An RNA of 177 nucleotides, treated with DMS and read out base by base.
[RMDB]
RNA sequence: GGGAACGACUCGAGUAGAGUCGAAAAGAUAUGGAUCAAACAUCGAUAUCCAUACACAGCAUCGAUCUACCGGGUCGGAAACGACCCGUAGGGAGCUGGUAUGGAUAUCGAUGUUUGAUCCUAAGUCCCUUAUACUGUUCUUCGGAACAGUAUAAGGAAAAGAAACAACAACAACAAC
Reactivity to DMS in 0.01 (KOAc 150mM, MgCl2 10mM, bicine 150mM(pH8.5), 24C), signal-to-noise 2, nucleotides 027 to 126: g010a100u000a300u000g010g000a010u000c020a010a010a020c010a020u000c010g010a000u000a000u000c000c000a000u000a000c020a140c000a010g040c010a300u010c190g000a060u020c000u000a010c090c170g050g020g010u000c000g010g000a040a100a290c000g000a010c000c000c000g000u000a010g010g000g000a010g030c010u000g010g020u000a000u000g010g010a000u000a000u000c000g000a000u000g000u000u000u000g010a010u010c010c010u000a020a080g000u000c040
The data come from the RNA Mapping Database (RMDB), library TTRINS.